[RMDB]
RNA sequence: GGGAACGACUCGAGUAGAGUCGAAAAGUUUAGAGACUGCUUGCUUAUAACACUUGGCCAGAACGAAAAUCUAUCUAAUAUCCGUAGCGUCAUAAUGUGUAGUAUAGCCGACAUUUGGCGUAUGAAAAAGAAGAAUGCUAUUCGUAGCAUUCUUCUUAAAAGAAACAACAACAACAAC
Reactivity to 2A3 in 0.01 (KOAc 150mM, MgCl2 10mM, bicine 150mM(pH8.5), 24C), signal-to-noise 9, nucleotides 027 to 126: g010u030u070u060a050g010a020g030a080c050u040g020c010u080u050g010c020u120u080a070u070a270a090c070a020c050u030u030g020g000c000c010a020g020a110a040c050g070a050a040a030a100u060c040u040a040u030c030u060a070a080u060a100u100c030c050g080u080a030g020c010g020u010c010a010u040a290a040u060g020u020g050u040a080g070u030a100u090a200g090c070c030g060a040c020a020u020u020u050g000g000c020g000u000a090u100g150a090a050a020
Reactivity to DMS in 0.01 (KOAc 150mM, MgCl2 10mM, bicine 150mM(pH8.5), 24C), signal-to-noise 8, nucleotides 027 to 126: g010u000u000u010a070g000a110g010a120c050u010g010c050u000u010g020c040u000u010a060u030a110a070c110a060c090u010u000g000g010c030c040a060g000a080a090c100g000a080a060a070a080u010c050u010a070u010c050u010a060a070u020a060u010c030c040g020u010a090g010c010g000u000c020a020u020a040a030u000g010u010g020u010a120g010u020a100u010a090g020c070c030g000a060c060a040u010u010u000g010g000c020g010u000a050u010g000a050a070a050
About this RNA
Conditions: 150 mM KOAc, 10 mM MgCl2 and 150 mM bicine (pH 8.5), 24 C. Chemical mapping of a 177-nucleotide RNA with 2A3 and DMS. For DMS the reverse transcriptase was MarathonRT. It was measured as part of the RMDB libraries RFM100 and RFMREP. 2A3 adducts were read by reverse transcription with SuperScript II with manganese. Values are in units of 0.01, from 0 to 300, in steps of 10.